[RMDB]
RNA sequence: GGGAACGACUCGAGUAGAGUCGAAAAGGGGUCUUAUAGACAACAGAUUCGCUAUCGUCUUGGAUUUACGAUGGGAGCACCUGAAGCCUCCACGGGUGCGAAGAACAUCGUUGUCAGACGAUAGCGAAUCUGCUAAUCUAUAAGACGGAGGCACCCAGAUUCACUUAAUGUUCGCAUUAAGUGAAUCAAAAGAAACAACAACAACAAC
Reactivity to 2A3 in 0.01 (KOAc 150mM, MgCl2 10mM, bicine 150mM(pH8.5), 24C), signal-to-noise 3, nucleotides 027 to 156: g050g010g010g010u000c000u000u000a000u010a000g010a000c030a060a010c010a080g000a010u000u000c000g010c020u030a000u030c000g040u040c060u110u240g270g000a110u300u300u190a010c000g000a000u000g010g010g020a030g000c000a000c000c000u020g060a160a030g110c040c050u090c050c020a030c020g010g000g000u010g020c010g050a120a010g020a020a010c000a000u000c000g010u000u030g010u000c000a000g000a000c000g000a020u010a000g000c000g000a000a000u000c000u000g000c000u000a000a000u000c000u000a000u000a010a000g000a000c000g000g010a010g020g070c030a050c020c000c000a000
Reactivity to DMS in 0.01 (KOAc 150mM, MgCl2 10mM, bicine 150mM(pH8.5), 24C), signal-to-noise 1, nucleotides 027 to 156: g010g000g050g010u000c000u000u010a000u000a030g030a070c020a040a030c010a020g000a040u010u010c010g020c000u000a000u000c000g000u000c000u000u000g020g030a090u000u000u000a020c020g000a060u000g020g000g010a300g000c000a020c010c000u000g010a060a190g010c080c030u000c020c030a280c040g000g000g050u010g040c020g030a090a140g000a090a160c020a010u000c020g000u000u010g000u010c020a090g000a030c040g000a010u000a000g030c000g000a000a000u000c010u000g000c010u010a150a160u000c010u000a000u010a020a040g010a040c040g000g000a060g040g070c080a260c000c000c030a180

An RNA of 207 nucleotides, treated with 2A3 and DMS and read out base by base. 2A3 adducts were read by reverse transcription with SuperScript II with manganese. High DMS reactivity at an A or C suggests that its Watson-Crick edge is free. The RNA was probed in 150 mM KOAc, 10 mM MgCl2 and 150 mM bicine (pH 8.5) at 24 C. For DMS the reverse transcriptase was MarathonRT.